[RMDB]
RNA sequence: GGGAACGACUCGAGUAGAGUCGAAAAUUGGCCUCGUGGGCGAUGGCCAGCAGAUGCAGCACCGCGUUGGUCGAGCCGCCGAACGCCAUUACCACCGCGAUGGCGUUCUCGAACGCCUCCUUGGUGAAACACGAAAGGUGUUCGCACCUUUCGUGUUAAAAGAAACAACAACAACAAC
Reactivity to 2A3 in 0.01 (KOAc 150mM, MgCl2 10mM, bicine 150mM(pH8.5), 24C), signal-to-noise 5, nucleotides 027 to 126: u080u020g030g000c010c010u020c030g020u150g050g030g010c120g050a130u160g020g000c000c000a000g000c000a020g040a150u170g030c060a060g040c030a100c070c040g030c030g030u050u030g050g000u030c020g030a040g020c020c020g100c010c010g010a040a020c020g000c000c010a010u020u090a070c030c020a020c000c020g040c060g010a030u160g000g000c000g000u010u010c030u030c060g070a050a020c010g010c010c000u020c000c010u050u150g020g000u050g030a040
Reactivity to DMS in 0.01 (KOAc 150mM, MgCl2 10mM, bicine 150mM(pH8.5), 24C), signal-to-noise 4, nucleotides 027 to 126: u010u030g000g010c000c050u010c040g030u020g010g010g000c010g010a130u020g010g000c010c010a030g010c060a120g010a120u030g000c040a080g020c050a060c030c030g000c110g050u020u010g010g000u000c040g000a260g000c050c010g000c110c070g000a010a050c300g010c010c030a020u010u010a140c090c010a050c040c030g020c300g010a000u010g020g000c000g000u000u000c030u020c210g010a050a080c050g010c010c000u010c070c030u010u010g000g020u010g000a130